[RMDB]
RNA sequence: GGGAACGACUCGAGUAGAGUCGAAAAUAAGCAGUAGCAUAGCUGAUCCUCCGUGCAUCGCCCAUGUGCUACGGUAAGGGUCUCACUCUAAGUGGGCUACACUAGUUAAUCUCCGUCUGAGGUUAAAUAGAAGAGCUUAAUGAGACUAGCUGAAUGGCUUACAAGCGAUCUUCGGAUCGCUUGUAAGAAAAGAAACAACAACAACAAC
Reactivity to 2A3 in 0.01 (KOAc 150mM, MgCl2 10mM, bicine 150mM(pH8.5), 24C), signal-to-noise 3, nucleotides 027 to 156: u130a020a010g020c030a000g030u100a020g050c100a100u080a060g010c050u030g020a030u040c000c000u000c010c000g020u010g010c000a000u030c040g040c050c010c020a040u120g000u000g000c030u090a030c000g000g040u040a110a090g010g010g020u000c010u020c040a080c010u090c030u080a100a080g040u060g030g050g000c000u030a010c040a010c070u000a010g010u000u020a000a010u000c010u030c050c070g300u120c190u250g000a010g000g010u010u010a010a020a010u030a030g120a160a010g010a040g000c030u080u140a040a050u140g020a010g010a020c020u030a030g020c000u050g060a130a070u120g090g000
Reactivity to DMS in 0.01 (KOAc 150mM, MgCl2 10mM, bicine 150mM(pH8.5), 24C), signal-to-noise 1, nucleotides 027 to 156: u010a070a020g050c020a150g010u010a040g020c010a100u020a130g040c030u000g030a110u010c040c040u000c020c020g040u020g020c000a030u000c120g020c070c080c080a170u010g060u010g020c030u010a020c010g000g020u010a070a080g010g020g030u000c000u000c030a040c020u030c100u010a110a070g040u000g010g050g030c010u010a060c110a250c010u000a030g010u010u010a000a030u010c000u000c000c200g030u010c060u010g010a050g010g000u000u000a000a010a010u000a050g000a160a150g010a130g010c020u010u010a030a090u000g010a070g010a070c000u000a050g000c020u000g010a160a110u010g000g010